Structure probing data (2A3 and DMS) for a 177-nucleotide construct. Source: RMDB library M2PK90, as collected in RNAgym. The DMS profile rests on 1,761 reads. High DMS reactivity at an A or C suggests that its Watson-Crick edge is free. 2A3 adducts were read by reverse transcription with SuperScript II with manganese. Reactivities are given for positions 27 through 126. For DMS the reverse transcriptase was MarathonRT. The RNA was probed in 150 mM KOAc, 10 mM MgCl2 and 150 mM bicine (pH 8.5) at 24 C.
RNA sequence: GGGAACGACUCGAGUAGAGUCGAAAAAUACAGCGUAAUCGAGCGGAGGAAAACGGCACUCCGAAAAUCGGGUACGAUUAUGAUCCCACUGCGUCGACGCUAGAUGCAGAACCGGAUUGCCGAGGAAGAUACAUCCGACAUUCGUGUCGGAUGUAUCAAAAGAAACAACAACAACAAC
Reactivity to 2A3 in 0.01 (KOAc 150mM, MgCl2 10mM, bicine 150mM(pH8.5), 24C), signal-to-noise 3, nucleotides 027 to 126: a000u140a020c050a030g050c010g050u060a060a050u070c030g020a040g030c050g020g040a020g030g070a010a120a030a040c000g080g000c040a020c030u000c010c000g030a110a030a000a020u110c030g000g040g070u080a010c030g000a040u110u140a090u220g050a040u040c000c000c000a010c000u010g000c000g010u000c000g060a070c110g020c240u090a020g000a030u000g000c020a000g010a030a020c060c020g000g020a090u060u070g010c000c000g010a040g070g050a070a040
Reactivity to DMS in 0.01 (KOAc 150mM, MgCl2 10mM, bicine 150mM(pH8.5), 24C), signal-to-noise 2, nucleotides 027 to 126: a070u010a070c120a090g010c020g010u000a060a050u000c010g000a080g020c020g020g000a040g000g000a040a050a080a090c070g000g000c010a080c010u000c000c020g000a060a070a040a070u000c040g000g000g000u000a110c000g010a050u000u010a080u010g000a100u000c000c020c010a300c030u000g020c000g050u000c020g000a140c230g020c160u010a100g000a020u000g000c020a020g000a070a060c150c040g000g010a050u010u010g010c000c000g000a110g030g010a140a070